[RMDB]
RNA sequence: GGGAACGACUCGAGUAGAGUCGAAAACAUUUUGAUCCAACCUCUCCUCUCGUAGAUGGAAGGACCAAACCACAAAAUAUUUUAUCGACGAGCGAAAAGAACUUCUUCGGAAAAGAGAAACAACGAAAGAAUGAACUGCGAAACAAGAAAACAAGGAUCUAGUAUCGUCCUUCGGGACGAUACUAGAAAAAGAAACAACAACAACAAC
Reactivity to 2A3 in 0.01 (KOAc 150mM, MgCl2 10mM, bicine 150mM(pH8.5), 24C), signal-to-noise 1, nucleotides 027 to 156: c090a000u110u140u060u100g010a030u100c000c000a000a000c010c000u020c020u000c000c000u140c050u090c110g090u140a010g000a090u230g010g050a030a040g020g000a000c000c030a050a030a030c040c040a090c010a010a160a060a000u110a090u100u140u090u140a100u120c050g010a040c040g030a030g050c030g050a010a040a140a110g060a050a070c090u080u060c000u020u040c080g030g100a100a020a040a040g050a010g000a030a070a010c040a110a000c010g060a070a000a060g030a020a090u090g000a060a080c000u090g050c080g100a060a000a060c070a060a020g130a020a050a000a000c060a000a020g090g020a060
Source information: The record gives the reactivity of an RNA of 207 nucleotides to 2A3. The RNA was probed in 150 mM KOAc, 10 mM MgCl2 and 150 mM bicine (pH 8.5) at 24 C. It was measured as part of the RMDB library OK3TST. The 2A3 profile rests on 355 reads. Reactivities are given for positions 27 through 156.